[RMDB]
RNA sequence: GGGAACGACUCGAGUAGAGUCGAAAACGCGUCAUGUUCGCAUGACGCGCAUUACCGAGAAAGCAGCUCGGUAUAAAACUCCAACCCUUGGAAACAAGGGAAAACCGAUAGUAUUCGUACUAUCGAAGAUUUAUGGUGUGUUCGCACACCAUAAAUCAAAAGAAACAACAACAACAAC
Reactivity to 2A3 in 0.01 (KOAc 150mM, MgCl2 10mM, bicine 150mM(pH8.5), 24C), signal-to-noise 2, nucleotides 027 to 126: c000g010c000g020u000c000a000u010g020u020u060c150g000c180a000u010g000a010c010g020c010g000c000a010u030u030a010c000c000g000a000g000a050a300a030g190c050a030g040c020u000c000g010g020u010a000u010a000a010a010a010c020u000c020c020a160a160c010c000c010u000u000g060g000a040a050a010c000a010a000g000g020g000a050a020a010a000c070c010g000a000u000a000g020u010a020u040u070c180g020u030a000c020u010a000u000c010g000a070a030
Reactivity to DMS in 0.01 (KOAc 150mM, MgCl2 10mM, bicine 150mM(pH8.5), 24C), signal-to-noise 2, nucleotides 027 to 126: c000g020c000g000u000c000a000u000g020u000u030c210g000c000a020u000g000a010c010g000c000g030c030a030u000u000a000c000c000g010a000g000a120a130a140g000c210a110g000c000u000c010g010g000u000a000u010a040a030a080a080c210u000c020c040a060a280c000c000c000u000u010g000g000a140a050a240c000a010a020g000g000g000a010a000a100a090c210c020g000a000u010a020g010u000a010u000u010c150g020u000a010c000u000a000u000c000g030a050a070
An RNA of 177 nucleotides, treated with 2A3 and DMS and read out base by base. In probing experiments dimethyl sulfate is read out at A N1 and C N3, which are open when not base-paired. DMS adducts were read by reverse transcription with MarathonRT. The DMS profile rests on 1,330 reads. The RNA was probed in 150 mM KOAc, 10 mM MgCl2 and 150 mM bicine (pH 8.5) at 24 C.